[RMDB]
RNA sequence: GGGAACGACUCGAGUAGAGUCGAAAAUGACUGUUCACCGCGUCCGCGCCCCAUCGCGGGUCGGCCGCGAACACCUGCGCCGGCAUAUAGCGCGCGGCAUUAAGCAGGAACCAGGCCAACUUGAUCCAUGCGGUGUCGCAUUCGUGCGACACCGCAUAAAAGAAACAACAACAACAAC
Reactivity to 2A3 in 0.01 (KOAc 150mM, MgCl2 10mM, bicine 150mM(pH8.5), 24C), signal-to-noise 1, nucleotides 027 to 126: u110g040a040c130u000g070u090u000c080a090c030c000g000c000g000u000c110c000g140c010g000c000c000c000c000a300u140c000g030c130g000g000g000u000c000g000g000c000c000g030c070g000a000a040c040a000c010c000u000g000c000g110c030c000g140g000c000a070u130a010u030a170g240c170g000c220g090c000g070g040c000a000u140u300a140a040g000c000a000g000g170a040a040c030c000a040g070g060c000c000a030a030c030u020u300g010a060u300c000c000
This 177-nucleotide RNA was probed chemically with 2A3. It was measured as part of the RMDB library OK1LIB. The RNA was probed in 150 mM KOAc, 10 mM MgCl2 and 150 mM bicine (pH 8.5) at 24 C.